RNA sequence: GGGAACGACUCGAGUAGAGUCGAAAAAUGCACACUGGCUUGAAGCAAGAAUGCUUCUUGACAACAUCUACCUCCAGGAUGGCCUCAUAGCCUCGCUCUAUCGGCCUGAGGCCGAUAAGGUAGCCGCCGUAUGGGCAUGCUUCGGCAUGCCCAUACGAAAAGAAACAACAACAACAAC
Reactivity to 2A3 in 0.01 (KOAc 150mM, MgCl2 10mM, bicine 150mM(pH8.5), 24C), signal-to-noise 4, nucleotides 027 to 126: a000u030g040c020a080c020a030c080u050g020g010c000u000u040g020a010a000g010c010a050a170g120a300a200u160g010c000u000u010c000u000u050g020a040c000a300a180c010a030u010c010u020a040c000c000u040c030c010a010g120g060a090u180g060g000c000c000u050c020a060u110a100g000c010c020u050c050g060c030u050c010u070a100u170c030g030g000c020c030u030g030a060g020g000c020c000g020a000u010a010a060g000g010u000a000g020c020c030g070c010
Reactivity to DMS in 0.01 (KOAc 150mM, MgCl2 10mM, bicine 150mM(pH8.5), 24C), signal-to-noise 2, nucleotides 027 to 126: a040u030g000c130a120c100a040c110u000g030g000c060u000u000g000a020a030g020c020a030a120g040a080a130u020g040c040u000u000c000u000u000g000a030c020a010a140c180a020u020c030u000a060c010c000u050c110c130a160g000g020a130u040g000g000c010c000u000c080a030u030a120g000c010c000u000c190g000c180u090c100u010a070u000c130g000g000c020c200u000g040a030g010g000c000c090g000a050u010a040a070g000g000u000a030g020c060c040g000c170

Chemical mapping of a 177-nucleotide RNA with 2A3 and DMS.
It was measured as part of the RMDB library OK1LIB.
High 2A3 reactivity points to a flexible backbone, as in loops and unpaired stretches.
The reactions ran in a buffer of 150 mM KOAc, 10 mM MgCl2 and 150 mM bicine (pH 8.5), at 24 C.
For DMS, 2,420 sequencing reads were counted.